An RNA of 177 nucleotides, treated with 2A3 and DMS and read out base by base. It was measured as part of the RMDB libraries RFM100 and RFMREP. DMS adducts were read by reverse transcription with MarathonRT. Reactivities are given for positions 27 through 126. The RNA was probed in 150 mM KOAc, 10 mM MgCl2 and 150 mM bicine (pH 8.5) at 24 C.
RNA sequence: GGGAACGACUCGAGUAGAGUCGAAAAGAAGGAGAUUACGAUGAGGAUGUACAGCUCCCUCUUCUGAUUAAGCUGAAGAGAAUUGCUGGCAGAAUCGAACCUAAAUCACUAGCCACUACUGAGUUAAGGUUGGUUCUUGAUUCGUCAAGAACCAACCAAAAGAAACAACAACAACAAC
Reactivity to 2A3 in 0.01 (KOAc 150mM, MgCl2 10mM, bicine 150mM(pH8.5), 24C), signal-to-noise 4, nucleotides 027 to 126: g080a030a000g080g040a040g000a030u190u160a090c080g010a000u130g010a020g010g000a030u090g040u080a230c050a010g010c010u060c000c070c000u000c000u000u000c000u040g090a210u110u140a120a100g180c060u020g030a020a010g010a000g000a030a120u220u150g000c000u000g000g040c000a010g010a040a000u000c010g030a120a110c000c010u080a130a090a000u060c040a020c120u030a010g080c000c040a040c050u160a070c040u040g090a040g200u070u120a120a040
Reactivity to DMS in 0.01 (KOAc 150mM, MgCl2 10mM, bicine 150mM(pH8.5), 24C), signal-to-noise 1, nucleotides 027 to 126: g000a060a090g010g010a090g050a130u000u000a030c190g000a240u010g000a070g020g000a140u000g000u000a120c000a040g000c020u000c270c090c010u000c000u000u000c000u000g000a180u050u010a070a300g000c030u000g000a050a020g000a000g010a100a280u030u000g090c080u000g000g000c110a040g000a300a100u000c000g010a030a190c140c110u000a070a030a050u000c050a010c050u050a140g000c030c060a130c080u000a010c040u000g010a060g060u000u020a070a090